[RMDB]
RNA sequence: GGGAACGACUCGAGUAGAGUCGAAAAUAUGCCCAGGGGGGCAGCGCUGCCCCCCUCUGCCACGACAUCACAAUUGUUGGGAAUACCGUUCAGCACGCGGGUUCACGCGGCAUGAUCGUGGCCGGGGGCCUAUUACAUCUUUCGAGAUGUAAUAGGCAAAAGAAACAACAACAACAAC
Reactivity to DMS in 0.01 (KOAc 150mM, MgCl2 10mM, bicine 150mM(pH8.5), 24C), signal-to-noise 1, nucleotides 027 to 126: u020a110u000g010c000c010c010a070g000g000g000g000g000g020c000a020g000c300g000c300u000g000c000c000c000c000c000c000u000c000u010g000c010c010a010c010g000a030c030a050u000c090a030c190a080a040u010u010g030u020u010g030g010g000a050a040u000a090c020c010g020u000u000c040a150g010c110a090c170g000c010g000g000g030u000u000c030a050c020g010c040g010g020c170a040u000g000a060u000c000g030u000g000g010c010c070g010g000g010g000
Reactivity to 2A3 in 0.01 (KOAc 150mM, MgCl2 10mM, bicine 150mM(pH8.5), 24C), signal-to-noise 3, nucleotides 027 to 126: u160a090u080g030c020c010c000a020g000g000g000g000g000g000c090a060g020c300g040c300u080g000c010c000c000c000c000c020u010c030u020g000c000c000a000c000g000a010c000a020u050c020a010c050a190a300u130u190g120u120u110g060g000g060a040a040u180a300c000c020g010u060u080c040a060g070c070a030c100g000c010g000g000g000u030u040c020a030c050g050c010g040g000c030a000u010g050a100u020c000g010u010g010g010c000c010g000g000g000g020
The data come from the RNA Mapping Database (RMDB), library OK2TST. Structure probing data (DMS and 2A3) for a 177-nucleotide construct. 2A3 is a SHAPE reagent: it acylates the 2'-hydroxyl of flexible nucleotides of all four kinds.